[RMDB]
RNA sequence: GGGAACGACUCGAGUAGAGUCGAAAAGCGACUACGCUCUCGCUGCCUAAGCGACAGCUAGUCCGUCAGCCCGGGAACGCCCUCGACCCGGAGCCUGGCGUCAGCUAGAGGGAUCCACCGAUGAGUUCGGUCGCGGGACUCAUCGGGACACCAACAGGCCAAAUCUUAUGUUCGCAUAAGAUUUGGCAAAAGAAACAACAACAACAAC
Reactivity to 2A3 in 0.01 (KOAc 150mM, MgCl2 10mM, bicine 150mM(pH8.5), 24C), signal-to-noise 1, nucleotides 027 to 156: g030c050g020a000c000u000a020c240g000c000u010c000u010c000g000c000u020g090c060c140u130a070a010g000c000g000a000c160a000g000c000u020a020g000u000c000c000g000u010c000a000g000c000c000c000g010g000g000a060a000c020g020c000c000c000u000c000g000a030c000c010c000g040g010a040g040c080c000u000g000g020c000g090u060c020a030g090c090u080a020g000a000g000g010g020a000u150c170c120a010c000c000g000a000u000g000a020g000u000u000c050g020g170u130c190g090c150g080g010g010a000c000u000c000a000u000c000g000g000g000a010c000a020c000c100a040a130c040a120g020